The data come from the RNA Mapping Database (RMDB), library TTRDES.
Chemical mapping of a 177-nucleotide RNA with DMS and 2A3.
2A3 adducts were read by reverse transcription with SuperScript II with manganese.
The reactions ran in a buffer of 150 mM KOAc, 10 mM MgCl2 and 150 mM bicine (pH 8.5), at 24 C.
For 2A3, 7,012 sequencing reads were counted.
RNA sequence: GGGAACGACUCGAGUAGAGUCGAAAAGAUAUGGACGUCUAGUAGGGAGCGUGGGAUCGGAAACGAUCCUCACGCAUCGAUCUACGGACGUCCUAAGUCAAAAGCCAUUUACUUCGGUAAAUGGCAACUCAUCUAUCGUGUUCGCACGAUAGAUGAGAAAAGAAACAACAACAACAAC
Reactivity to DMS in 0.01 (KOAc 150mM, MgCl2 10mM, bicine 150mM(pH8.5), 24C), signal-to-noise 2, nucleotides 027 to 126: g010a010u000a120u020g000g000a010c010g010u000c000u000a120g070u000a010g010g000g000a060g000c000g040u000g010g000g000a020u000c010g040g010a060a040a070c000g030a010u000c010c010u050c020a010c000g010c010a060u000c220g010a140u000c000u000a010c010g010g010a010c000g020u000c000c020u000a000a070g020u000c020a140a130a120a170g020c000c000a010u000u000u000a000c000u000u020c240g030g010u000a000a000a030u000g030g000c020a030a020
Reactivity to 2A3 in 0.01 (KOAc 150mM, MgCl2 10mM, bicine 150mM(pH8.5), 24C), signal-to-noise 2, nucleotides 027 to 126: g000a000u020a010u090g000g000a010c000g010u000c030u070a160g010u020a000g060g080g200a300g050c000g000u030g000g000g000a010u010c000g010g000a020a030a000c010g020a000u000c020c010u060c010a000c010g000c000a010u090c070g070a150u020c000u000a000c020g010g000a010c010g000u010c000c000u000a000a000g020u010c010a010a020a080a060g000c000c000a010u000u010u000a020c020u030u100c300g170g000u000a000a000a000u010g000g000c000a000a000